[RMDB]
RNA sequence: GGGAACGACUCGAGUAGAGUCGAAAAGACGCCUGUGUGGCGAAGCGAGCAAUGGAAUAAGCCGCAAUAGAUGAUGAGAAGGAAGCGGCAAGAUGGAACGCUCGCAAUGAGAUCCAUCUACCAGAGAGAUACCGGAUAGUUUCGACUAUCCGGUAUCAAAAGAAACAACAACAACAAC
Reactivity to DMS in 0.01 (KOAc 150mM, MgCl2 10mM, bicine 150mM(pH8.5), 24C), signal-to-noise 4, nucleotides 027 to 126: g030a110c040g000c000c000u000g000u030g030u010g010g030c020g000a100a130g010c030g000a010g080c060a100a230u010g030g010a080a060u020a080a060g010c020c000g020c000a070a160u000a080g000a090u030g000a190u010g010a090g000a110a070g000g000a080a300g030c010g000g020c030a030a060g000a020u000g000g000a050a110c300g000c000u000c000g000c080a080a020u030g010a060g010a080u020c000c010a020u010c020u000a180c040c040a090g000a050g010a240
Reactivity to 2A3 in 0.01 (KOAc 150mM, MgCl2 10mM, bicine 150mM(pH8.5), 24C), signal-to-noise 2, nucleotides 027 to 126: g060a000c030g030c000c000u120g070u060g100u140g260g000c010g000a090a000g110c010g010a040g030c030a010a020u090g010g100a010a160u110a120a050g000c000c000g010c020a020a040u100a080g040a060u110g040a020u030g060a070g120a100a020g210g070a140a010g000c010g000g010c020a010a000g010a020u000g000g040a000a140c050g000c170u000c000g040c000a000a050u170g010a040g010a000u000c000c000a000u010c000u040a110c010c080a000g050a000g010a010

The record gives the reactivity of an RNA of 177 nucleotides to DMS and 2A3.
For DMS, 4,813 sequencing reads were counted.
The reactions ran in a buffer of 150 mM KOAc, 10 mM MgCl2 and 150 mM bicine (pH 8.5), at 24 C.